An RNA of 177 nucleotides, treated with DMS and read out base by base. Values cover nucleotides 27 to 126. For DMS the reverse transcriptase was MarathonRT. The reactions ran in a buffer of 150 mM KOAc, 10 mM MgCl2 and 150 mM bicine (pH 8.5), at 24 C. It was measured as part of the RMDB library TTRDES.
RNA sequence: GGGAACGACUCGAGUAGAGUCGAAAAAAGAUAUGGACCUACUCGAGGCUAUGGAAGUCGCGAAACUGUUCUCGGAAACGAGAACAGGAGACUUCUCAUAGCCACAGACAAGUAGGUCCUAAGUCAAGUAUGCAUGUACCUUCGGGUACAUGCAUACAAAAGAAACAACAACAACAAC
Reactivity to DMS in 0.01 (KOAc 150mM, MgCl2 10mM, bicine 150mM(pH8.5), 24C), signal-to-noise 1, nucleotides 027 to 126: a070a070g000a030u040a300u000g000g000a020c000c000u000a000c000u000c040g080a050g010g020c000u000a000u000g000g000a080a000g010u070c000g000c300g010a160a100a300c000u010g000u000u010c000u000c000g020g000a040a090a150c000g010a000g000a000a010c000a020g000g000a040g000a020c010u000u000c000u020c050a000u000a000g070c000c000a180c220a060g000a090c300a030a000g010u000a000g000g020u000c000c000u000a000a050g000u000c010a120a120